Chemical mapping of a 207-nucleotide RNA with 2A3 and DMS. The reactions ran in a buffer of 150 mM KOAc, 10 mM MgCl2 and 150 mM bicine (pH 8.5), at 24 C. For DMS the reverse transcriptase was MarathonRT.
[RMDB]
RNA sequence: GGGAACGACUCGAGUAGAGUCGAAAAGACACAUACCGCACUUAUGAGGAAUUCAAGCAGGCUAAGAAGGAGGCCAUGAACAGACUAUCCCACUGCGGAAGUGGAAUGAGAAUGGUGCUUGUAGAUGCUUACAAUUAUGAUGAGGACUUCAAGAUCCACGUACUGUAUGGUUCGCCAUACAGUACGUAAAAGAAACAACAACAACAAC
Reactivity to 2A3 in 0.01 (KOAc 150mM, MgCl2 10mM, bicine 150mM(pH8.5), 24C), signal-to-noise 5, nucleotides 027 to 156: g060a000c020a000c000a100u130a090c040c050g060c030a050c040u170u090a050u220g060a030g020g020a050a070u100u100c060a050a030g020c040a040g050g040c030u030a090a030g010a020a040g120g010a030g010g000c010c010a030u040g030a020a020c030a020g050a020c020u040a100u070c030c010c010a030c070u080g030c050g090g010a030a020g030u020g020g070a070a090u130g020a030g070a100a030u050g010g010u060g040c000u030u040g030u040a030g020a080u050g020c010u040u060a030c030a040a120u180u070a060u210g070a010u040g010a040g010g030a030c010u080u030c110a020a030g020a060u010c020c010
Reactivity to DMS in 0.01 (KOAc 150mM, MgCl2 10mM, bicine 150mM(pH8.5), 24C), signal-to-noise 2, nucleotides 027 to 156: g020a110c070a030c130a080u000a150c030c030g010c030a110c070u000u000a110u010g010a030g010g000a080a150u020u000c060a120a080g010c100a050g040g000c070u000a090a080g030a050a060g040g010a170g030g000c040c020a080u000g010a140a090c060a110g000a100c070u000a110u010c000c020c000a030c030u000g020c090g000g030a100a140g020u010g030g010a020a020u010g010a090g030a070a070u000g020g020u000g000c000u000u000g040u000a110g010a110u000g030c070u000u000a060c030a060a080u000u010a080u000g000a090u010g000a090g010g020a080c010u030u010c080a040a090g000a120u000c010c070